[RMDB]
RNA sequence: GGGAACGACUCGAGUAGAGUCGAAAAGUAGGAACUCAUGGUCACAAGGACAGCACCAAGCCCUGAGGGAUCAGCCCCCAUGAUCCAAACACCUCCCACCAGGCUCCACCUCCAACACUGGGGAUUAUAUUUUAACACGAGAAUUAGUGGGGACAUACUCCUAAAUUAUGUUCGCAUAAUUUAGGAGAAAAGAAACAACAACAACAAC
Reactivity to 2A3 in 0.01 (KOAc 150mM, MgCl2 10mM, bicine 150mM(pH8.5), 24C), signal-to-noise 2, nucleotides 027 to 156: g120u120a070g000g060a040a020c010u020c040a010u060g030g020u090c030a100c070a210a070g030g010a020c030a050g030c000a030c080c020a030a010g020c000c000c000u040g010a060g060g030g000a030u020c010a050g030c030c010c000c000c000a010u010g000a010u000c020c020a040a100a000c090a050c020c040u010c000c010c020a000c030c030a010g010g020c010u010c010c010a040c000c020u020c010c010a050a090c060a040c120u060g010g020g000g010a010u130u010a020u010a040u030u130u020u060a060a000c050a010c050g010a010g030a070a020u020u030a000g030u020g010g000g000g010a020c030a040u070a030
Reactivity to DMS in 0.01 (KOAc 150mM, MgCl2 10mM, bicine 150mM(pH8.5), 24C), signal-to-noise 2, nucleotides 027 to 156: g010u010a100g000g010a070a120c040u010c000a080u000g010g010u000c010a140c050a080a160g000g020a080c020a140g010c080a160c030c040a100a260g000c020c000c020u010g010a160g020g020g020a040u000c020a090g000c050c000c000c010c020a140u010g010a080u000c010c020a130a080a080c000a020c070c010u010c000c000c030a050c020c000a070g010g000c010u010c010c010a040c030c010u000c030c050a040a170c090a080c100u000g010g020g030g010a110u010u000a040u000a090u010u000u000u000a060a100c040a100c070g000a070g000a080a070u000u010a030g000u000g000g010g030g010a060c050a070u010a120